[RMDB]
RNA sequence: GGGAACGACUCGAGUAGAGUCGAAAACACAUGCCAUCAUAUCGCUUAAGAACUCUUAACUCUGAUGGCUUUCGAGUUAUGUGGUGCAUUGAAGCUCUCCCUUCAAUUCAACGUACCGUUCCGUCAACAGUACCCCAAAGUUCGCUUUGGGGUACUGAAAAGAAACAACAACAACAAC
Reactivity to 2A3 in 0.01 (KOAc 150mM, MgCl2 10mM, bicine 150mM(pH8.5), 24C), signal-to-noise 2, nucleotides 027 to 126: c060a000c020a050u120g000c010c000a000u020c010a000u040a020u170c110g040c100u040u020a040a050g060a280a260c100u060c020u300u010a010a020c010u020c030u040g000a000u020g020g000c000u010u040u010c040g020a030g030u070u040a050u130g140u130g050g040u050g000c030a000u030u000g010a020a000g000c030u010c030u100c070c000c000u040u040c030a030a040u080u030c020a030a040c020g040u000a020c010c020g000u010u000c020c010g110u070c040a060a060
Reactivity to DMS in 0.01 (KOAc 150mM, MgCl2 10mM, bicine 150mM(pH8.5), 24C), signal-to-noise 4, nucleotides 027 to 126: c150a100c180a100u000g010c000c000a010u010c020a030u010a040u010c180g010c190u000u020a030a010g010a210a140c300u030c010u000u000a020a040c020u000c070u000g010a010u000g000g010c020u010u000u000c040g010a030g030u000u000a050u000g010u000g000g010u000g010c050a050u000u000g000a010a010g010c060u000c060u000c030c050c010u000u020c150a040a070u010u000c030a040a050c060g010u000a020c050c000g010u000u000c010c000g020u000c090a060a130
The record gives the reactivity of an RNA of 177 nucleotides to 2A3 and DMS. The data come from the RNA Mapping Database (RMDB), library M2PK90. The 2A3 profile rests on 2,345 reads. The RNA was probed in 150 mM KOAc, 10 mM MgCl2 and 150 mM bicine (pH 8.5) at 24 C. For DMS, 2,929 sequencing reads were counted. 2A3 adducts were read by reverse transcription with SuperScript II with manganese.